[RMDB]
RNA sequence: GGGAACGACUCGAGUAGAGUCGAAAACUCCGCGCUCAAGAGUUGUAUCCACCGGGUAGUUCCCAACUCCGGCUGGUGUGAAGAAGGAGCCGUUCCACGCAGGACGCCAACAAGAAGAAGCCGAAUCGAACAUACAAGGGUUCGCCCUUGUAUGUUCAAAAGAAACAACAACAACAAC
Reactivity to DMS in 0.01 (KOAc 150mM, MgCl2 10mM, bicine 150mM(pH8.5), 24C), signal-to-noise 2, nucleotides 027 to 126: c020u000c000c060g010c130g040c060u000c080a240a100g000a010g010u000u010g000u000a110u000c000c030a060c000c040g010g000g020u000a020g000u000u000c000c000c010a090a130c110u000c080c000g020g000c050u000g000g020u000g000u010g010a110a150g010a140a050g010g000a040g020c090c040g000u000u000c030c020a040c110g010c170a150g020g020a060c080g010c020c030a070a110c150a100a070g000a090a070g000a100a080g020c060c060g000a180a120u000c110
Reactivity to 2A3 in 0.01 (KOAc 150mM, MgCl2 10mM, bicine 150mM(pH8.5), 24C), signal-to-noise 1, nucleotides 027 to 126: c000u000c000c030g080c040g020c000u090c060a080a090g040a070g020u000u040g040u100a180u060c030c040a030c220c000g010g010g030u020a020g010u020u000c010c000c020a030a030c060u050c030c030g060g030c040u040g000g070u140g030u030g180a040a300g050a060a040g050g050a020g010c020c000g040u030u010c010c010a160c100g000c050a060g000g020a030c000g030c020c000a100a130c000a160a030g010a080a020g020a050a020g060c060c020g000a000a040u140c150